[RMDB]
RNA sequence: GGGAACGACUCGAGUAGAGUCGAAAAUUAAGAGAUAGUCUAAAAAGGUACAGCUUUUUAGAAACGGAUACAACCUUGACUAGAGAGUAAAAUCUUAAUACUACCAUAGUAGGCCUAAAAGCAGCCAUCAAUUGAGAAAGCGUUAAAGCUCAACAAACUAAUGAUACGAGUUCGCUCGUAUCAUUAGAAAAGAAACAACAACAACAAC
Reactivity to DMS in 0.01 (KOAc 150mM, MgCl2 10mM, bicine 150mM(pH8.5), 24C), signal-to-noise 2, nucleotides 027 to 156: u000u010a080a120g000a110g020a190u000a130g010u000c000u000a020a060a040a040a050g030g050u000a140c170a260g000c020u000u000u000u000u000a040g000a040a150a100c120g020g010a110u020a100c200a070a100c010c010u020u010g060a160c030u000a110g020a090g020a100g020u000a050a040a110a130u000c040u010u000a070a130u000a070c050u020a050c020c020a120u000a070g040u000a090g010g010c040c020u000a060a050a130a120g010c080a020g000c040c040a100u000c060a010a210u000u010g010a060g010a080a040a030g010c040g010u000u010a070a030a150g030c010u030c010a040a050c110a020a060a250
Reactivity to 2A3 in 0.01 (KOAc 150mM, MgCl2 10mM, bicine 150mM(pH8.5), 24C), signal-to-noise 3, nucleotides 027 to 156: u040u000a070a020g030a000g030a030u090a120g030u020c030u070a020a000a000a030a030g040g030u170a130c030a100g120c010u060u030u010u000u030a020g000a040a070a000c050g020g010a020u060a140c050a050a080c030c010u040u070g050a080c050u100a040g010a000g040a020g120u060a020a130a080a080u010c010u000u010a000a000u010a040c020u010a020c010c010a030u030a040g130u030a020g010g000c000c010u030a050a050a020a020g050c070a010g010c020c000a040u090c040a060a130u050u010g010a020g020a070a090a020g040c020g010u090u160a150a060a020g020c000u010c010a020a060c020a080a100a040

The data come from the RNA Mapping Database (RMDB), library PDB130. This 207-nucleotide RNA was probed chemically with DMS and 2A3. For 2A3, 1,926 sequencing reads were counted. The RNA was probed in 150 mM KOAc, 10 mM MgCl2 and 150 mM bicine (pH 8.5) at 24 C. For 2A3 the reverse transcriptase was SuperScript II with manganese. For DMS the reverse transcriptase was MarathonRT. The DMS profile rests on 3,071 reads.